The data come from the RNA Mapping Database (RMDB), library OK2TST.
Structure probing data (DMS) for a 177-nucleotide construct.
The DMS profile rests on 2,204 reads.
[RMDB]
RNA sequence: GGGAACGACUCGAGUAGAGUCGAAAAGCGCCUAUCUUCACGAUCGACCGCACGCCCGAUUGGUCGGCCGCGACGAUCUCGGCGUUCGGCAAGCGGCCGGAUGGGCGGAUCUACUGUGACGUGGUGGUAACGUGAGCAAGUUCGCUUGCUCACGUUAAAAAGAAACAACAACAACAAC
Reactivity to DMS in 0.01 (KOAc 150mM, MgCl2 10mM, bicine 150mM(pH8.5), 24C), signal-to-noise 2, nucleotides 027 to 126: g000c070g020c010c000u000a050u000c040u000u000c120a070c050g000a080u000c100g000a090c030c030g020c090a140c030g030c020c010c020g010a140u000u010g000g010u000c010g010g000c050c030g000c060g000a060c010g000a030u000c030u000c140g000g020c090g000u010u010c010g000g000c070a140a180g040c040g030g000c030c040g000g000a020u000g000g010g020c000g020g000a050u000c020u010a030c040u010g000u010g010a070c070g000u010g020g020u010g020g010
Values cover nucleotides 27 to 126. DMS adducts were read by reverse transcription with MarathonRT. The reactions ran in a buffer of 150 mM KOAc, 10 mM MgCl2 and 150 mM bicine (pH 8.5), at 24 C.